[RMDB]
Source information:
This 207-nucleotide RNA was probed chemically with DMS and 2A3. The RNA was probed in 150 mM KOAc, 10 mM MgCl2 and 150 mM bicine (pH 8.5) at 24 C. For DMS the reverse transcriptase was MarathonRT. Reactivities are rounded to 0.1 and cut off at 0 and 3.

RNA sequence: GGGAACGACUCGAGUAGAGUCGAAAACAAAAAGUCCCACACAAACCUCACGUCUUCUAUCGGGAUCCUGGGGCGUAUAUGGGCAGCGCUGUGUACAAAUGUACUGGGUGGCAGUGUGUACCAACACAUAUACAUGAAAAGGUGAAUGAGCAUGGCGAAUUCCCUGGUGUUUCGACACCAGGGAAUUAAAAGAAACAACAACAACAAC
Reactivity to DMS in 0.01 (KOAc 150mM, MgCl2 10mM, bicine 150mM(pH8.5), 24C), signal-to-noise 1, nucleotides 027 to 156: c050a050a040a090a140a150g030u000c000c000c000a090c090a090c050a100a100a080c050c050u000c040a040c070g000u000c000u000u000c060u040a180u010c160g010g000g010a060u000c060c050u000g060g010g000g020c030g000u000a110u000a050u020g000g010g050c010a110g000c050g020c040u010g010u000g040u010a060c040a100a070a100u020g020u000a050c010u030g000g030g040u000g010g050c000a020g000u000g030u000g000u010a140c090c030a070a060c000a010c050a020u000a100u000a050c050a110u010g000a070a060a090a080g020g040u000g000a120a070u020g000a100g010c050a030u000g000g100c100g000
Reactivity to 2A3 in 0.01 (KOAc 150mM, MgCl2 10mM, bicine 150mM(pH8.5), 24C), signal-to-noise 2, nucleotides 027 to 156: c060a010a130a020a010a030g070u030c000c070c000a010c030a000c010a010a140a070c080c020u070c050a060c100g030u000c000u120u000c010u130a090u120c070g030g000g040a040u040c010c000u030g000g020g000g000c040g000u030a040u020a020u120g030g030g000c010a000g030c030g000c060u030g000u020g000u060a040c020a070a160a050u160g020u060a050c030u040g140g000g000u030g040g000c020a020g030u000g010u020g010u070a050c000c050a070a030c040a000c000a030u050a000u060a140c020a040u110g120a060a030a010a020g020g020u020g030a040a020u050g020a020g030c060a040u040g050g000c030g020